[RMDB]
RNA sequence: GGGAACGACUCGAGUAGAGUCGAAAACUGACGCCAGGGAAAACGUCGGCCCCUAAGAUCGGGCGCGACUUAGUGGCGUCGCCGCGAGUAUUCUUGUACGGGGAAGCGCACUUCGCUGUCUCAUCCCGUGUGGCCACAGCCUCCUUAACGCGCGCCAGUUUCCGACGAGCUUCGGCUCGUCGGAAACAAAAGAAACAACAACAACAAC
Reactivity to 2A3 in 0.01 (KOAc 150mM, MgCl2 10mM, bicine 150mM(pH8.5), 24C), signal-to-noise 1, nucleotides 027 to 156: c000u020g020a000c000g030c020c070a030g120g030g000a000a020a090a000c020g010u020c020g010g000c000c000c000c010u100a240a140g030a260u240c190g010g000g000c270g000c000g030a010c010u010u040a110g010u050g030g000c000g010u000c000g000c010c010g010c040g020a070g140u050a140u120u180c110u200u170g010u160a020c040g000g000g000g000a000a010g000c020g000c150a090c070u250u300c100g000c030u020g050u090c040u040c020a110u050c000c010c050g070u080g030u030g010g000c020c020a010c060a060g000c000c020u060c020c000u090u090a080a010c070g010c000g000c000g000c050c000a000